[RMDB]
An RNA of 177 nucleotides, treated with DMS and 2A3 and read out base by base.
RNA sequence: GGGAACGACUCGAGUAGAGUCGAAAAACACAGAGGUUGUACUCACUUUGACGAUGAUUAACCAUCAUUGAGGAGAACCAAAGUAACUUUUGGGUGUUAGGUACAAGGUAAAAAAAAUCUGAGCUUGGUAGGAUAAUGCCUUCGGGCAUUAUCCUACAAAAGAAACAACAACAACAAC
Reactivity to DMS in 0.01 (KOAc 150mM, MgCl2 10mM, bicine 150mM(pH8.5), 24C), signal-to-noise 1, nucleotides 027 to 126: a010c040a130c030a000g050a290g070g040u000u030g010u040a300c000u080c130a160c080u000u100u000g010a140c220g010a000u000g000a030u000u010a170a070c300c070a020u000c000a010u000u000g000a300g050g000a030g000a040a030c020c090a000a100a070g000u000a090a050c190u020u000u000u000g000g000g050u000g000u000u000a120g010g020u000a090c050a010a100g000g070u000a010a020a080a040a090a150a000a070u000c070u010g010a130g000c250u000u050g030
Reactivity to 2A3 in 0.01 (KOAc 150mM, MgCl2 10mM, bicine 150mM(pH8.5), 24C), signal-to-noise 1, nucleotides 027 to 126: a000c120a000c040a020g110a000g020g050u000u050g000u030a010c030u020c190a080c000u060u000u040g110a150c120g000a000u040g010a000u060u090a010a100c010c060a000u000c000a070u030u030g050a000g060g110a030g000a000a000c000c000a000a000a000g100u060a040a030c000u130u120u000u000g080g000g000u110g080u170u160a050g020g010u020a100c000a050a000g000g190u250a210a000a000a000a000a000a000a000u090c050u040g010a020g050c030u010u070g020